RNA sequence: GGGAACGACUCGAGUAGAGUCGAAAAGAUAUGGAGUUGGAGACAUGCUCAUAAAGGGUCGGAAACGACCUACAAAGAGCAACAGCUCCACCUCCUAAGUCAAAAGGUGGUCGUUCGCGACCACCAAUCUAAACACGUACUUCGGUACGUGUUUAGAAAAAGAAACAACAACAACAAC
Reactivity to DMS in 0.01 (KOAc 150mM, MgCl2 10mM, bicine 150mM(pH8.5), 24C), signal-to-noise 2, nucleotides 027 to 126: g020a030u010a300u000g000g000a020g010u000u000g000g000a000g000a070c050a250u000g000c000u000c000a080u000a100a090a140g020g000g000u000c000g000g010a030a080a200c010g020a010c010c000u000a030c120a080a140a160g000a010g010c030a030a060c240a070g000c010u000c000c010a010c040c000u010c010c010u030a040a130g030u000c030a120a110a080a050g010g040u000g000g010u000c000g030u000u010c250g000c000g000a000c000c000a000c000c010a040a030
Reactivity to 2A3 in 0.01 (KOAc 150mM, MgCl2 10mM, bicine 150mM(pH8.5), 24C), signal-to-noise 2, nucleotides 027 to 126: g040a030u040a030u120g000g010a010g000u000u000g020g000a010g010a010c130a230u300g000c010u000c000a020u280a050a220a120g070g000g000u000c000g000g010a000a080a020c010g020a000c000c000u010a040c030a010a180a020g010a000g000c040a070a040c040a050g020c000u000c010c010a010c010c000u000c000c000u020a120a010g040u020c050a060a040a050a150g020g000u020g010g010u010c030g030u050u120c300g000c000g130a000c000c000a010c000c000a000a010
Chemical mapping of a 177-nucleotide RNA with DMS and 2A3. It was measured as part of the RMDB library TTRDEL. In probing experiments dimethyl sulfate is read out at A N1 and C N3, which are open when not base-paired. Conditions: 150 mM KOAc, 10 mM MgCl2 and 150 mM bicine (pH 8.5), 24 C. 2A3 adducts were read by reverse transcription with SuperScript II with manganese.